[RMDB]
RNA sequence: GGGAACGACUCGAGUAGAGUCGAAAAGAUAUGGAAUGUACUUCAACAGCUUACUGUCGGAAACGAUUAAGACAUGAAGGCAUUCCUAAGUCAAACCUUGUCAGAUCCUUCGGGAUCUGACAAGGAAGGAGGUUUAUUUGUUCGCAAAUAAACCUCCAAAAGAAACAACAACAACAAC
Reactivity to 2A3 in 0.01 (KOAc 150mM, MgCl2 10mM, bicine 150mM(pH8.5), 24C), signal-to-noise 2, nucleotides 027 to 126: g020a020u050a020u040g000g020a040a000u010g040u130a300c000u010u000c020a230a190c030a150g000c010u030u070a100c100u300g090u090c000g000g000a020a040a000c000g010a010u080u070a000a030g040a130c040a170u190g010a010a000g010g010c000a000u000u030c010c010u010a030a020g000u010c050a090a050a200c020c000u010u000g000u020c000a000g000a010u000c010c010u080u280c300g100g000g010a010u000c010u050g000a010c000a000a000g000g010a000a010
Reactivity to DMS in 0.01 (KOAc 150mM, MgCl2 10mM, bicine 150mM(pH8.5), 24C), signal-to-noise 1, nucleotides 027 to 126: g010a010u000a230u000g010g010a000a000u000g000u000a150c000u000u000c000a030a130c300a140g010c000u000u000a030c300u010g070u000c000g020g000a040a030a170c010g000a020u000u000a000a000g010a040c080a200u000g020a010a010g010g000c000a060u010u020c000c000u000a010a030g000u000c010a040a110a190c000c000u000u000g010u000c000a020g000a010u000c000c000u010u000c120g000g000g030a000u000c000u000g000a010c000a010a010g000g000a030a030